[RMDB]
About this RNA: Source: RMDB library OK3TST, as collected in RNAgym. Structure probing data (2A3 and DMS) for a 207-nucleotide construct. The reactions ran in a buffer of 150 mM KOAc, 10 mM MgCl2 and 150 mM bicine (pH 8.5), at 24 C. Reactivities are given for positions 27 through 156. For DMS, 3,154 sequencing reads were counted.
RNA sequence: GGGAACGACUCGAGUAGAGUCGAAAAGCUAUCUCUAGCCACCAACGGACAUAAAUUAGGGGUAUUCCCCGUGAUCCCUCACAUGAAUACGGCGCACUUUGAGACCCACACUUUAACCGUAUCACAAAAAUUCAGCGCUUUUAUUGAGCCGGUGCCACCAUAUAGGUUCCUUCGGGAACCUAUAUGGAAAAGAAACAACAACAACAAC
Reactivity to 2A3 in 0.01 (KOAc 150mM, MgCl2 10mM, bicine 150mM(pH8.5), 24C), signal-to-noise 4, nucleotides 027 to 156: g010c010u010a020u120c020u000c030u050a020g020c010c020a080c040c040a110a060c070g010g050a020c030a090u280a120a210a060u180u190a100g020g000g000g020u080a110u080u140c020c040c000c000g000u030g050a070u070c000c020c000u080c030a060c010a090u130g100a160a030u080a090c030g020g000c030g040c040a030c040u050u070u090g040a030g020a070c010c040c020a060c000a010c070u180u070u140a060a020c010c040g040u050a030u070c000a030c050a080a090a030a090a110u210u180c040a070g030c020g020c000u040u060u040u090a100u080u120g030a010g020c020c040g050g000u040g020c020c030a020
Reactivity to DMS in 0.01 (KOAc 150mM, MgCl2 10mM, bicine 150mM(pH8.5), 24C), signal-to-noise 2, nucleotides 027 to 156: g010c070u000a070u000c020u000c030u010a110g030c050c030a150c050c060a120a130c060g000g000a190c030a090u010a030a070a160u000u000a040g000g010g040g070u010a170u020u000c020c000c010c030g000u010g000a070u040c010c020c020u000c070a140c110a150u010g030a100a060u000a050c030g000g010c020g040c040a060c090u000u000u000g010a100g000a110c020c020c040a080c070a060c050u000u000u000a070a050c040c020g000u000a030u000c010a080c100a040a050a100a070a110u000u010c040a140g030c020g010c050u000u000u000u000a110u050u000g000a100g000c000c020g020g040u010g000c030c040a150